The record gives the reactivity of an RNA of 177 nucleotides to 2A3. Conditions: 150 mM KOAc, 10 mM MgCl2 and 150 mM bicine (pH 8.5), 24 C. Reactivities are given for positions 27 through 126. The data come from the RNA Mapping Database (RMDB), library OK1LIB.
[RMDB]
RNA sequence: GGGAACGACUCGAGUAGAGUCGAAAACUGCUCCUGAUCUUUAAUUCUGUAAUAGCGAAAUCAGUUCCAGCAGGGAUCAGGUCCUGCAAAUAACAAUGGAAGAGUUUCGACAUUUAGAAUGAGAAUGGCAUGAUUACCCGUUCGCGGGUAAUCAUGCAAAAGAAACAACAACAACAAC
Reactivity to 2A3 in 0.01 (KOAc 150mM, MgCl2 10mM, bicine 150mM(pH8.5), 24C), signal-to-noise 1, nucleotides 027 to 126: c000u030g040c060u130c000c010u000g110a180u000c110u010u070u150a060a010u200u040c040u000g300u070a000a000u000a060g080c000g000a000a000a010u180c000a200g000u000u000c000c000a000g000c010a000g000g000g010a060u200c030a000g000g000u000c000c110u120g060c000a000a130a130u260a230a290c160a230a110u020g000g000a070a000g000a070g080u000u010u010c000g110a020c000a000u000u000u170a020g000a130a000u010g010a000g050a060a060u070g130